[RMDB]
RNA sequence: GGGAACGACUCGAGUAGAGUCGAAAAGGAACUGGCCCGAUGAAGCCCGGCAACCUAACUUUAUUUAAGCGUAAAGUGAAGGUGCUAAUUCCAGCAAAAUGGUGUAUUCCGUUUUGGUAGAUAAGAGAAGCGUGACAUGAGUUCGCUCAUGUCACAAGGUCUGUAACUGGUUCGCCAGUUACAGACCAAAAGAAACAACAACAACAAC
Reactivity to 2A3 in 0.01 (KOAc 150mM, MgCl2 10mM, bicine 150mM(pH8.5), 24C), signal-to-noise 1, nucleotides 027 to 156: g030g000a000a050c020u030g030g000c000c000c000g010a070u100g080a070a000g050c020c020c000g020g040c000a080a220c010c000u010a010a010c000u000u010u010a020u040u090u050a130a070g020c000g030u010a000a020a000g000u010g160a040a090g000g000u000g000c000u010a000a100u100u020c000c000a000g000c030a090a000a000a000u080g030g030u050g030u050a070u140u030c000c000g000u000u020u000u000g030g050u140a140g020a140u170a220a140g010a000g020a140a050g060c040g040u000g000a000c000a000u000g000a000g000u030u150c050g040c020u000c010a000u000g000u000c010a000c000a000a000